Structure probing data (2A3) for a 207-nucleotide construct. For 2A3 the reverse transcriptase was SuperScript II with manganese.

RNA sequence: GGGAACGACUCGAGUAGAGUCGAAAAGCCAUAGCCGUGAGAAGUGAGAGCUGCCCCUGCCCUACUGAUGGGGAGACAGGUACAGGUGACGGGAGCGUUAGCCGAGAUGUCCACCCAUCCACCACACGCCUAUGGGCACCCUUGUGCCAUGAGGGCAGGACUAGUAAUGCUUCGGCAUUACUAGUCCAAAAGAAACAACAACAACAAC
Reactivity to 2A3 in 0.01 (KOAc 150mM, MgCl2 10mM, bicine 150mM(pH8.5), 24C), signal-to-noise 1, nucleotides 027 to 156: g060c030c000a020u040a040g130c030c040g010u040g030a150g060a110a050g000u200g070a060g040a080g020c000u090g020c010c000c050c030u010g000c000c000c000u090a110c110u100g000a040u050g000g030g040g010a110g000a010c050a000g070g040u220a050c030a000g000g000u000g000a030c000g000g040g120a120g230c040g000u080u050a020g040c010c000g100a130g000a090u000g040u090c020c000a030c040c000c000a000u020c020c000a040c000c040a030c010a020c100g010c000c000u060a060u050g060g020g000c050a060c090c010c000u060u140g010u000g030c020c050a090u070g130a120g030g040g000c030a030